[RMDB]
An RNA of 207 nucleotides, treated with 2A3 and read out base by base. It was measured as part of the RMDB library RNAMAK. The reactions ran in a buffer of 150 mM KOAc, 10 mM MgCl2 and 150 mM bicine (pH 8.5), at 24 C.
RNA sequence: GGGAACGACUCGAGUAGAGUCGAAAAGGGGUCCAAUUAAAGUCGAAUGUUGUCAGCUCUCCUGAAGCCUCCACGGGAAGAGCUUGGAUUUACAUUCGUCGUAAUUGGACGGAGGCACCCAAAGUUGUGAGAAACUGUUCGCAGUUUCUCACAACAAACGUUUCGUAAGUUUCGACUUACGAAACGUAAAAGAAACAACAACAACAAC
Reactivity to 2A3 in 0.01 (KOAc 150mM, MgCl2 10mM, bicine 150mM(pH8.5), 24C), signal-to-noise 1, nucleotides 027 to 156: g070g010g000g000u000c000c000a000a000u090u060a100a040a030g030u040c000g000a000a000u030g030u180u100g070u300c030a000g000c010u000c000u010c000c000u010g000a130a020g020c030c000u000c030c030a040c010g000g010g000a210a090g010a040g000c010u040u090g040g050a010u180u240u150a040c000a010u000u010c000g000u000c010g000u000a010a120u010u000g030g000a000c010g020g010a010g080g030c010a020c040c000c000a060a190a010g010u010u000g040u040g000a010g000a000a000a000c020u000g020u070u080c220g010c160a000g000u000u000u000c010u000c000a010c000a000a000c000a000a070